An RNA of 177 nucleotides, treated with DMS and 2A3 and read out base by base. Reactivities are given for positions 27 through 126. For 2A3, 3,007 sequencing reads were counted. DMS adducts were read by reverse transcription with MarathonRT. Conditions: 150 mM KOAc, 10 mM MgCl2 and 150 mM bicine (pH 8.5), 24 C.
RNA sequence: GGGAACGACUCGAGUAGAGUCGAAAAGCCGCCAAGGGGGAGAUGCGCUGGCAGUUUCACCACGUCAUCGACGUGGCGCCGACCAUCCUGGAGGCGGCGGGGUUGCCGGAACCGUUAUUCGUCAACGUGUUAUGUUCUCUUUCGAGAGAACAUAACAAAAAGAAACAACAACAACAAC
Reactivity to DMS in 0.01 (KOAc 150mM, MgCl2 10mM, bicine 150mM(pH8.5), 24C), signal-to-noise 5, nucleotides 027 to 126: g030c020c010g020c020c030a070a300g020g000g000g000g020a130g000a040u010g010c140g020c040u000g020g010c010a160g000u000u010u010c240a190c000c000a000c000g010u000c010a160u010c260g000a020c010g020u000g000g020c100g000c020c020g010a050c100c010a030u000c010c020u000g000g000a300g010g000c000g010g000c000g010g000g010g020u000u000g010c030c010g000g000a040a090c100c040g010u010u000a090u000u000c040g000u000c040a030a040c080g000
Reactivity to 2A3 in 0.01 (KOAc 150mM, MgCl2 10mM, bicine 150mM(pH8.5), 24C), signal-to-noise 2, nucleotides 027 to 126: g020c000c000g000c000c020a060a050g110g010g010g050g020a100g030a040u050g030c030g000c100u000g030g010c000a070g070u070u150u250c050a020c040c020a000c000g000u000c020a300u170c230g000a000c000g000u010g010g020c000g000c000c000g000a050c000c010a010u020c000c010u030g020g000a040g000g010c000g000g020c000g000g010g000g000u040u020g020c040c000g000g030a050a070c040c030g090u100u110a080u090u070c030g040u020c030a030a010c050g040